The data come from the RNA Mapping Database (RMDB), library OK2TRN. This 177-nucleotide RNA was probed chemically with DMS and 2A3. In probing experiments dimethyl sulfate is read out at A N1 and C N3, which are open when not base-paired. The reactions ran in a buffer of 150 mM KOAc, 10 mM MgCl2 and 150 mM bicine (pH 8.5), at 24 C. 2A3 adducts were read by reverse transcription with SuperScript II with manganese.
RNA sequence: GGGAACGACUCGAGUAGAGUCGAAAAUCAGGACCUGGUGUGGGUGCUGACGCCGGCAAGUUUAGACUAGAACAACAAUGACAAAAAAUAUGUGUAGGACAGUGUGAGUCUGCUAUGUGGCAGAAUGCCUUACUCCCAAUUUCGAUUGGGAGUAAGGAAAAGAAACAACAACAACAAC
Reactivity to DMS in 0.01 (KOAc 150mM, MgCl2 10mM, bicine 150mM(pH8.5), 24C), signal-to-noise 8, nucleotides 027 to 126: u000c040a060g010g010a080c030c020u000g030g030u010g030u010g000g010g020u000g000c020u000g020a050c150g000c040c030g000g010c050a050a050g010u010u000u010a080g010a060c070u020a080g010a090a060c080a060a050c090a080a090u020g010a070c110a010a020a100a070a070a100u010a060u010g000u000g010u010a060g000g010a100c110a050g010u010g010u010g010a090g000u000c010u000g000c020u000a080u000g010u000g000g010c010a050g010a060a080u010g010
Reactivity to 2A3 in 0.01 (KOAc 150mM, MgCl2 10mM, bicine 150mM(pH8.5), 24C), signal-to-noise 7, nucleotides 027 to 126: u050c000a010g030g080a040c000c010u050g100g140u150g100u160g090g010g000u050g050c010u020g010a050c040g030c020c010g010g010c030a030a030g000u040u160u160a020g010a030c030u030a030g080a150a040c030a030a000c010a060a170u150g060a050c080a030a160a020a030a090a020u220a090u180g070u020g040u070a030g010g070a030c050a080g020u030g010u020g080a020g030u020c010u010g000c000u040a040u170g050u070g020g000c010a000g060a050a040u110g040